[RMDB]
Notes
Source: RMDB library OK1LIB, as collected in RNAgym. This 177-nucleotide RNA was probed chemically with 2A3 and DMS. Reactivities are given for positions 27 through 126. As a SHAPE reagent, 2A3 marks flexible, mostly unpaired nucleotides at the ribose 2'-OH. The reactions ran in a buffer of 150 mM KOAc, 10 mM MgCl2 and 150 mM bicine (pH 8.5), at 24 C.
RNA sequence: GGGAACGACUCGAGUAGAGUCGAAAAGCUAGCCAGCGCACGAUGAGACUGCCGUGACGUCUAUCCUGCGUCUCAACUAGUCUCCAUCAAUCAAAACGCUGGGAUUGAUGUACGAGACUAGUACACAGUCUAUGCACUACUUCGGUGGUGUAUAGACAAAAGAAACAACAACAACAAC
Reactivity to 2A3 in 0.01 (KOAc 150mM, MgCl2 10mM, bicine 150mM(pH8.5), 24C), signal-to-noise 9, nucleotides 027 to 126: g050c040u070a020g040c010c020a010g000c010g010c010a020c030g040a040u100g030a010g020a040c040u070g040c060c040g100u100g050a060c020g020u010c020u050a070u010c000c010u010g010c010g040u010c020u010c030a020a020c000u000a000g000u000c000u000c000c000a000u000c000a000a010u000c010a020a060a080a120c120g040c120u140g070g010g000a000u000u000g000a000u000g030u080a080c100g000a000g000a010c000u000a000g010u040a010c110a000c010a030
Reactivity to DMS in 0.01 (KOAc 150mM, MgCl2 10mM, bicine 150mM(pH8.5), 24C), signal-to-noise 9, nucleotides 027 to 126: g010c050u020a080g020c020c020a080g010c020g010c030a040c160g010a040u010g000a060g010a040c020u010g030c040c070g010u010g010a060c100g010u000c040u010a110u000c010c020u000g000c030g000u010c030u010c090a110a050c000u000a010g000u000c000u000c010c000a000u000c000a010a000u000c010a070a080a100a110c140g010c090u010g000g010g000a010u000u000g000a010u000g000u030a100c180g000a020g020a000c000u000a000g010u000a060c200a100c200a130